[RMDB]
RNA sequence: GGGAACGACUCGAGUAGAGUCGAAAAUCCACGUCCUUCGGGACGUGGAAAAUACGGCACGGGAGCCGAAGAAAUCCCGAAGCGCAGUGCAGCGCACCACAAAAAGGUGAGUCUUCGGACUCACCAACAAGGAUAUUCACUUCGGUGAAUAUCCUUGAAAAGAAACAACAACAACAAC
Reactivity to DMS in 0.01 (KOAc 150mM, MgCl2 10mM, bicine 150mM(pH8.5), 24C), signal-to-noise 3, nucleotides 027 to 126: u000c000c000a010c010g030u000c000c010u000u000c230g020g000g010a020c010g040u000g020g000a000a000a050a100u000a150c040g030g010c010a080c080g000g010g000a060g000c000c000g030a070a060g020a030a100a090u000c030c000c000g010a180a110g010c050g020c010a120g020u000g010c150a110g000c030g020c040a080c050c100a080c170a060a070a050a130a090g020g030u000g000a010g010u000c000u000u010c220g000g000a010c000u000c000a000c010c000a020a060
Reactivity to 2A3 in 0.01 (KOAc 150mM, MgCl2 10mM, bicine 150mM(pH8.5), 24C), signal-to-noise 3, nucleotides 027 to 126: u000c000c000a000c010g000u000c010c010u030u120c160g090g000g000a010c000g000u000g000g010a000a000a000a000u060a010c010g000g000c030a000c040g040g000g020a020g030c040c060g030a030a050g140a030a090a010u010c040c020c010g010a170a060g040c020g000c040a030g100u220g130c070a060g000c050g000c040a040c040c030a050c060a010a140a020a000a000g010g000u000g000a000g000u010c030u050u100c230g050g020a000c000u000c000a000c000c000a010a000

Source information:
This 177-nucleotide RNA was probed chemically with DMS and 2A3. The DMS profile rests on 2,304 reads. Values are in units of 0.01, from 0 to 300, in steps of 10. The RNA was probed in 150 mM KOAc, 10 mM MgCl2 and 150 mM bicine (pH 8.5) at 24 C. For DMS the reverse transcriptase was MarathonRT.